This 177-nucleotide RNA was probed chemically with 2A3 and DMS.
RNA sequence: GGGAACGACUCGAGUAGAGUCGAAAAACACCGUUACGACGGUGAAUCUCAUAAGUUACGGGUUUCGGGGCAUCGGAACCGAUUUUAAGCUGGUUCGUUGUCGACGAAACCUGCAGACUAUGGGAAAUUAUGACGGCAGAUUCGUCUGCCGUCAUAAAAAAGAAACAACAACAACAAC
Reactivity to 2A3 in 0.01 (KOAc 150mM, MgCl2 10mM, bicine 150mM(pH8.5), 24C), signal-to-noise 4, nucleotides 027 to 126: a000c010a000c010c000g020u070u110a160c300g020a020c030g100g000u070g000a120a120u000c020u000c010a010u050a060a060g000u010u010a020c010g000g020g000u000u000u000c000g000g000g000g040c000a000u010c060g160g010a040a010c010c010g050a040u030u180u100u230a130a090g130c130u100g030g030u000u000c010g000u020u000g010u010c160g140a260c000g020a010a000a000c000c000u000g000c000a040g020a000c000u000a010u030g000g000g070a000a080a030
Reactivity to DMS in 0.01 (KOAc 150mM, MgCl2 10mM, bicine 150mM(pH8.5), 24C), signal-to-noise 1, nucleotides 027 to 126: a140c000a030c000c000g000u000u020a110c120g010a030c010g000g000u030g000a090a020u000c000u000c010a000u000a050a030g000u000u000a170c070g010g000g000u000u000u000c000g050g000g000g050c000a020u010c000g040g000a010a000c000c000g010a070u020u010u040u000a220a160g030c130u020g000g020u000u010c000g000u000u000g020u000c000g000a130c000g020a000a000a020c000c000u000g000c100a040g040a000c000u000a000u000g010g000g000a040a070a060
About this RNA
For DMS the reverse transcriptase was MarathonRT. It was measured as part of the RMDB library RFM100.